An RNA of 207 nucleotides, treated with 2A3 and read out base by base. For 2A3, 891 sequencing reads were counted. It was measured as part of the RMDB library RNAMAK. For 2A3 the reverse transcriptase was SuperScript II with manganese.

RNA sequence: GGGAACGACUCGAGUAGAGUCGAAAAACCUUUGUGCCUUGUCACAGGAUAGGGAGCUCGUGCCCACCCAUUGGGUGGGUAAACGAGCGAAGAACUAUCUCACAGCAAGGCACUCUGGUAAAAUCUUCCCAUAUCUGUUCGCAGAUAUGGGAAGAAACGUACACGAGAUGUUCGCAUCUCGUGUACGAAAAGAAACAACAACAACAAC
Reactivity to 2A3 in 0.01 (KOAc 150mM, MgCl2 10mM, bicine 150mM(pH8.5), 24C), signal-to-noise 1, nucleotides 027 to 156: a000c000c000u000u010u000g000u000g000c000c000u030u020g040u060c020a110c040a070g010g000a000u000a000g070g020g010a020g000c020u000c000g020u050g240c010c000c000a000c000c000c180a300u270u290g000g000g000u000g000g000g040u020a120a010a000c010g000a000g030c000g000a040a000g000a000a000c000u000a000u000c020u080c070a050c000a030g010c000a000a000g010g070c010a000c000u000c000u000g010g000u000a060a030a050a150u000c010u000u000c010c000c000a000u000a000u000c000u010g090u080u120c300g000c190a000g010a000u020a010u000g000g010g020a000a000g000a000a000a000